RNA sequence: GGGAACGACUCGAGUAGAGUCGAAAAAUAACAUUCGUGUUAUAGUACACCUUUGUGCUCUGGAGGUGUGGGAAGAAGCUGCGCACCCAUUGGGUGCGACCCAGUGUAAACCACACCGUUGAAAGAGCACUCUGGUCCUCCUAGCGUUCGCGCUAAAAUCUCUCCUCAUAUUCGUAUGAGGAGAGAUAAAAGAAACAACAACAACAAC
Reactivity to 2A3 in 0.01 (KOAc 150mM, MgCl2 10mM, bicine 150mM(pH8.5), 24C), signal-to-noise 4, nucleotides 027 to 156: a000u030a010a010c030a030u050u140c230g050u070g010u040u010a060u020a080g110u100a050c030a020c080c000u000u010u000g000u000g010c000u000c010u020g000g040a020g020g010u010g000u030g000g010g000a160a300g030a000a000g060c000u020g000c000g000c000a000c000c010c050a130u110u300g010g000g000u000g010c010g010a050c040c020c000a020g020u020g000u090a010a010a010c000c000a000c000a000c000c000g000u010u000g000a010a000a000g000a010g000c000a000c000u000c000u000g010g000u030c010c040u020c000c000u010a010g000c000g040u070u060c220g000c000g000c150u080a070a110a080
Reactivity to DMS in 0.01 (KOAc 150mM, MgCl2 10mM, bicine 150mM(pH8.5), 24C), signal-to-noise 1, nucleotides 027 to 156: a060u010a020a000c000a140u030u000c250g040u000g050u000u000a040u000a230g000u000a090c080a030c000c000u000u000u000g030u000g020c000u000c060u000g020g000a080g020g020u000g090u000g000g030g000a060a110g030a220a300g000c000u000g000c000g000c000a020c020c000c000a250u000u000g040g030g010u000g010c000g030a010c130c130c030a030g030u000g000u000a030a100a300c020c010a030c000a020c020c000g000u000u000g010a190a080a080g010a040g010c000a000c020u000c010u030g020g000u000c010c070u000c010c030u020a030g020c090g030u000u020c200g040c150g050c020u000a000a040a090

Source: RMDB library RNAMAK, as collected in RNAgym. The record gives the reactivity of an RNA of 207 nucleotides to 2A3 and DMS. Values cover nucleotides 27 to 156. For 2A3 the reverse transcriptase was SuperScript II with manganese. Conditions: 150 mM KOAc, 10 mM MgCl2 and 150 mM bicine (pH 8.5), 24 C.